This 177-nucleotide RNA was probed chemically with DMS. For DMS the reverse transcriptase was MarathonRT. Conditions: 150 mM KOAc, 10 mM MgCl2 and 150 mM bicine (pH 8.5), 24 C. The data come from the RNA Mapping Database (RMDB), library RFM100.
RNA sequence: GGGAACGACUCGAGUAGAGUCGAAAACAGCAGCCGCGGUAAUUCCAGCUCCAAUAGCGUAUAUUAAAGUUGUUGCGGUUAAAACGUUUGUAGUUGAACUUGUGUUUCAUGCGGGUAGUACAACUUACUAGUCUGGAGAUUUCGAUCUCCAGACUAGAAAAGAAACAACAACAACAAC
Reactivity to DMS in 0.01 (KOAc 150mM, MgCl2 10mM, bicine 150mM(pH8.5), 24C), signal-to-noise 1, nucleotides 027 to 126: c120a190g000c040a070g000c020c040g030c050g050g050u000a000a100u000u000c040c010a030g000c010u000c060c080a000a130u060a100g000c070g040u020a080u070a160u060u040a090a110a020g000u030u000g030u000u030g010c300g040g000u000u030a050a080a030a140c020g000u010u070u000g000u010a010g000u020u000g000a080a030c070u000u000g000u000g000u000u040u000c030a100u000g020c040g000g000g000u010a030g000u000a080c100a000a010c030u030u000a100